[RMDB]
RNA sequence: GGGAACGACUCGAGUAGAGUCGAAAAUAAAAACCCAGAACAGUUAUCGAUAUCGAGAUCCAUGUCCUUGAGCAAGAUGGCGGUAUUAUGGGAUCUUUAAUGUACCAGGAGACCAACUUGACGAACAGCCUGGGAGUCACUUCGGUGACUCCCAGGCAAAAGAAACAACAACAACAAC
Reactivity to 2A3 in 0.01 (KOAc 150mM, MgCl2 10mM, bicine 150mM(pH8.5), 24C), signal-to-noise 1, nucleotides 027 to 126: u190a000a000a040a010a000c000c010c000a000g010a130a050c050a060g160u210u240a110u240c050g030a000u000a000u190c060g010a000g030a090u000c000c000a040u100g040u070c000c000u000u000g000a000g140c000a000a050g000a030u040g050g030c100g160g120u050a000u300u120a130u140g060g000g000a060u030c020u090u040u100a130a090u030g210u160a000c030c000a000g000g050a040g090a060c000c000a000a190c250u030u220g040a000c140g080a030a030c040a040
Conditions: 150 mM KOAc, 10 mM MgCl2 and 150 mM bicine (pH 8.5), 24 C. The record gives the reactivity of an RNA of 177 nucleotides to 2A3.